RNA sequence: GGGAACGACUCGAGUAGAGUCGAAAAGGAUGAAGAAUUCCACACGAAGUUCAAAACACGAGAAUUUUUGUCAUCUGGACGGGAACGCAAGGCAAAACUUUGCAGAAAAAAUGUGGUUUUGCUGACCACAACUGGUAUAGUUCGCUAUACCAGUUGUAAAAGAAACAACAACAACAAC
Reactivity to DMS in 0.01 (KOAc 150mM, MgCl2 10mM, bicine 150mM(pH8.5), 24C), signal-to-noise 6, nucleotides 027 to 126: g010g000a040u010g010a070a060g010a050a050u000u010c000c050a150c200a230c110g010a080a120g020u010u020c170a090a100a100a080c110a060c110g000a130g010a040a030u000u000u000u000u020g010u000c020a030u000c020u000g010g010a100c110g010g000g000a060a090c120g010c090a070a120g000g010c030a030a030a020a110c030u000u000u000g030c020a060g020a010a050a080a040a080a080u000g010u000g010g000u000u000u010u000g000c050u000g000a100c130c090
Reactivity to 2A3 in 0.01 (KOAc 150mM, MgCl2 10mM, bicine 150mM(pH8.5), 24C), signal-to-noise 5, nucleotides 027 to 126: g010g000a010u030g010a000a030g010a030a050u050u000c050c010a040c010a010c090g150a180a060g030u200u180c110a130a100a120a040c080a040c060g070a080g030a160a040u050u040u050u140u190g150u050c010a010u030c030u030g000g070a030c030g010g000g040a070a010c050g030c120a080a080g030g000c010a010a010a010a010c030u140u220u260g000c040a020g230a050a150a020a010a020a030u050g000u060g000g030u010u000u000u040g000c020u020g010a030c010c030
Background: Chemical mapping of a 177-nucleotide RNA with DMS and 2A3. The data come from the RNA Mapping Database (RMDB), library OK2TRN. For 2A3, 6,368 sequencing reads were counted. The RNA was probed in 150 mM KOAc, 10 mM MgCl2 and 150 mM bicine (pH 8.5) at 24 C.